Annotation
Conditions: 150 mM KOAc, 10 mM MgCl2 and 150 mM bicine (pH 8.5), 24 C. This 177-nucleotide RNA was probed chemically with DMS and 2A3. For DMS, 1,580 sequencing reads were counted. In probing experiments dimethyl sulfate is read out at A N1 and C N3, which are open when not base-paired.
[RMDB]
RNA sequence: GGGAACGACUCGAGUAGAGUCGAAAAGAUAUGGACGAAGACAGCACUACCCACCUCCUGUGUCGGAAACGACACUGGAGAGGUGUCGAGUCCUAAGUCAAAACCACAGCUCUUCGGAGCUGUGGAAGACACGAUAUUCGUUCGCGAAUAUCGUGUCAAAAGAAACAACAACAACAAC
Reactivity to DMS in 0.01 (KOAc 150mM, MgCl2 10mM, bicine 150mM(pH8.5), 24C), signal-to-noise 2, nucleotides 027 to 126: g010a010u010a050u000g000g010a000c010g010a120a120g000a030c030a030g000c120a210c270u000a250c130c040c070a200c160c010u010c000c000u000g010u000g000u000c010g000g000a000a000a050c000g010a010c000a000c000u000g000g010a000g000a030g030g010u000g010u000c000g000a300g000u000c000c010u000a000a110g010u000c000a100a070a120a210c010c000a000c020a000g000c000u000c000u010u020c230g010g010a030g040c000u000g000u000g000g010a010a030
Reactivity to 2A3 in 0.01 (KOAc 150mM, MgCl2 10mM, bicine 150mM(pH8.5), 24C), signal-to-noise 2, nucleotides 027 to 126: g000a030u020a020u050g000g000a010c020g020a090a030g000a010c040a040g190c040a080c190u300a210c060c050c000a050c020c000u000c000c010u020g000u000g000u000c000g000g000a000a010a000c000g000a000c000a010c000u000g000g000a020g030a040g140g020u000g000u000c010g000a020g020u000c010c000u010a000a010g010u020c010a000a040a050a120c010c030a010c010a000g040c000u030c030u000u220c300g130g000a000g000c000u010g000u000g000g000a000a010